[RMDB]
RNA sequence: GGGAACGACUCGAGUAGAGUCGAAAAGCCUUCUUUCGAGGUCUUCCGCGUCUUUUCUUGCUUGGAUCCAUUUCUCGAGGACGUCCUCCCUUCCUCCCCUCCGGGUCCUCUUCGUCUCGGACUGGCUGUACGAAUGACUUCGGUCAUUCGAAAAGAAACAACAACAACAAC
Reactivity to DMS in 0.01 (KOAc 150mM, MgCl2 10mM, bicine 150mM(pH8.5), 24C), signal-to-noise 9, nucleotides 027 to 129: g030c050c010u020u010c040u020u050u020c070g020a070g030g020u020c010u000u000c040c050g050c140g000u020c020u000u020u020u000c040u010u010g000c010u010u030g000g000a060u030c010c050a150u040u030u030c020u000c010g000a070g010g000a110c080g020u010c000c040u010c010c010c010u000u000c020c010u020c010c000c000c000u000c050c030g000g040g000u000c010c040u020c040u020u010c080g020u020c020u000c040g020g000a080c060u040g000g020c070u000g030u040a120
Reactivity to 2A3 in 0.01 (KOAc 150mM, MgCl2 10mM, bicine 150mM(pH8.5), 24C), signal-to-noise 9, nucleotides 027 to 129: g020c010c000u070u070c040u030u140u080c070g040a050g050g070u010c030u050u020c010c010g040c030g080u040c020u030u100u040u020c030u060u120g080c020u030u060g060g020a050u060c030c010a100u080u100u040c030u020c020g030a080g050g050a110c020g040u040c010c010u030c000c000c000u030u040c000c000u010c010c010c000c000u000c010c000g010g000g020u020c020c010u040c030u050u040c030g080u010c010u010c030g030g020a030c030u030g030g020c020u040g040u070a040